[RMDB]
RNA sequence: GGGAACGACUCGAGUAGAGUCGAAAAGAUAUGGAAAUCCUCAGGGAGCUUAGUGGUCGGAAACGACCACGAGCGAAGAACUGAGGGAUUUCCUAAGUCAAAAGCGGUUUGCUUCGGCAAACCGCAAUCACAGAGUAAAGUUCGCUUUACUCUGUGAAAAAGAAACAACAACAACAAC
Reactivity to 2A3 in 0.01 (KOAc 150mM, MgCl2 10mM, bicine 150mM(pH8.5), 24C), signal-to-noise 2, nucleotides 027 to 126: g000a010u030a010u070g010g000a000a000a020u030c000c000u000c000a010g110g040g080a300g060c000u050u180a150g030u010g010g000u000c010g030g000a020a070a010c020g010a010c030c000a010c010g000a010g000c000g040a170a070g040a080a040c020u010g000a030g080g000g010a020u000u010u000c000c000u000a020a010g010u000c020a020a040a120a130g010c040g000g020u010u000u020g000c030u060u150c300g130g000c000a000a010a010c000c000g030c020a000a000
Reactivity to DMS in 0.01 (KOAc 150mM, MgCl2 10mM, bicine 150mM(pH8.5), 24C), signal-to-noise 3, nucleotides 027 to 126: g020a040u010a230u010g000g000a020a030a020u000c000c000u000c010a020g010g000g020a100g020c000u000u000a070g040u000g000g000u010c010g010g010a050a030a110c000g030a010c000c000a010c000g000a010g010c010g040a160a130g020a190a160c000u010g000a030g000g010g000a030u000u000u000c000c000u010a000a090g000u000c020a110a090a160a180g010c010g010g000u000u000u000g020c010u010u010c280g040g010c010a010a000a010c000c000g030c010a000a040